This 177-nucleotide RNA was probed chemically with DMS and 2A3. For DMS, 925 sequencing reads were counted. The reactions ran in a buffer of 150 mM KOAc, 10 mM MgCl2 and 150 mM bicine (pH 8.5), at 24 C.
RNA sequence: GGGAACGACUCGAGUAGAGUCGAAAAAGGGCUGGAUUCGUCCAGCCCUGCACAUUCGUACGCAACGAAGCGUACGUCAUUACGCAAAUGUCGUAAAGCGUAGAACCACGGACUUCGGUCCGUGGAAGCAAGUUUUGUGCUUCGGCACAAAACUUGCAAAAGAAACAACAACAACAAC
Reactivity to DMS in 0.01 (KOAc 150mM, MgCl2 10mM, bicine 150mM(pH8.5), 24C), signal-to-noise 1, nucleotides 027 to 126: a000g030g020g010c010u000g000g000a020u000u000c210g030u010c000c010a000g010c000c000c000u010g010c060a100c130a100u000u000c010g000u000a040c010g000c010a090a150c200g000a110a110g060c020g020u000a000c030g000u000c190a000u010u000a020c030g000c040a070a030a030u030g010u020c060g030u000a050a040a090g040c030g030u030a060g000a060a220c000c010a020c000g000g010a020c000u000u030c280g030g000u010c000c000g030u000g000g000a040a010
Reactivity to 2A3 in 0.01 (KOAc 150mM, MgCl2 10mM, bicine 150mM(pH8.5), 24C), signal-to-noise 1, nucleotides 027 to 126: a000g000g010g020c000u000g000g000a030u060u020c150g020u030c010c000a000g000c000c000c000u010g000c000a000c000a130u100u100c010g030u010a000c020g000c040a210a160c130g200a130a060g000c010g000u010a010c000g000u000c000a060u040u150a010c040g010c030a090a050a140u140g110u140c030g060u090a020a030a040g050c020g010u000a020g040a100a010c000c000a000c020g000g040a010c010u030u020c190g100g000u000c000c000g000u000g000g000a010a010